[RMDB]
RNA sequence: GGGAACGACUCGAGUAGAGUCGAAAAGAUAUGGAGCUUCAACAGCUCCACGUGUCGGAAACGACAUGGAGACAUGAAGCCUCCUAAGUCAAAGACACAGGAAUGUCUUCGGACAUUCCUGUGUCAACUGUACGAGUAAGUUCGCUUACUCGUACAGAAAAGAAACAACAACAACAAC
Reactivity to DMS in 0.01 (KOAc 150mM, MgCl2 10mM, bicine 150mM(pH8.5), 24C), signal-to-noise 4, nucleotides 027 to 126: g000a060u000a300u000g000g000a030g010c010u010u000c030a040a100c300a140g000c000u000c010c010a010c130g050u000g010u000c000g000g000a090a100a170c010g000a020c010a040u000g000g000a020g000a030c060a200u000g010a030a030g010c140c030u000c000c010u000a070a120g000u000c030a070a100a160g000a010c000a000c010a010g000g000a000a010u000g010u000c010u000u020c170g010g010a020c000a000u000u000c000c000u000g000u000g010u000c000a010a080
Reactivity to 2A3 in 0.01 (KOAc 150mM, MgCl2 10mM, bicine 150mM(pH8.5), 24C), signal-to-noise 2, nucleotides 027 to 126: g040a010u060a050u170g000g000a000g000c000u040u020c010a070a080c040a200g030c010u020c010c000a010c060g050u050g010u000c010g030g000a070a090a060c020g010a010c000a000u060g000g000a010g000a000c030a050u090g020a000a010g040c060c060u000c000c000u040a170a030g040u030c020a080a000a190g000a000c010a000c020a000g020g020a010a000u010g010u050c030u070u130c300g020g000a000c000a000u000u000c000c000u010g000u010g000u000c000a000a000